The data come from the RNA Mapping Database (RMDB), library M2RFPK.
This 207-nucleotide RNA was probed chemically with 2A3 and DMS.
Values cover nucleotides 27 to 156.
The RNA was probed in 150 mM KOAc, 10 mM MgCl2 and 150 mM bicine (pH 8.5) at 24 C.
For DMS, 2,565 sequencing reads were counted.
RNA sequence: GGGAACGACUCGAGUAGAGUCGAAAAUAGAAGAAGAGGCUAGGUGGUAUUCCGGUGUGGGAUACUUGGUACUAUGUAACGCUAAUUGCAUAAGAUUGUAGGACGGAAUUUACAGUCUUGGUUUUUAAAAACUUCUCGUAGUUCGCUACGAGAAGAACGCUGUAUUUAGGUUCGCCUAAAUACAGCGAAAAGAAACAACAACAACAAC
Reactivity to 2A3 in 0.01 (KOAc 150mM, MgCl2 10mM, bicine 150mM(pH8.5), 24C), signal-to-noise 5, nucleotides 027 to 156: u090a010g030a060a000g020a040a010g020a020g060g010c070u070a020g060g040u040g030g010u080a070u070u030c060c030g100g040u130g020u120g070g000g010a010u020a050c010u020u080g020g020u030a050c020u060a040u100g050u060a080a030c050g000c100u050a090a060u120u060g010c000a030u030a110a020g010a040u040u050g020u030a020g010g050a030c080g030g040a070a030u070u090u050a040c020a010g010u010c000u010u020g030g020u050u020u020u070u100a090a150a010a020a020c000u000u000c010u000c000g000u000a000g010u050u030c190g000c110u000a000c000g000a000g000a000a000g000a000a000
Reactivity to DMS in 0.01 (KOAc 150mM, MgCl2 10mM, bicine 150mM(pH8.5), 24C), signal-to-noise 1, nucleotides 027 to 156: u000a110g000a110a040g010a110a160g010a050g040g020c030u000a000g040g010u030g000g010u010a060u010u000c040c040g030g070u000g030u010g020g000g020a060u000a030c020u020u000g010g030u010a050c050u000a060u000g010u020a060a120c070g020c080u010a080a140u000u010g000c030a110u000a010a060g010a040u000u000g020u000a020g010g020a300c060g010g000a080a270u000u000u000a040c020a040g000u000c000u000u000g000g030u000u000u030u000u030a030a000a100a130a070c000u000u000c000u010c000g040u000a010g000u020u000c260g020c000u000a010c000g010a020g000a010a030g000a050a070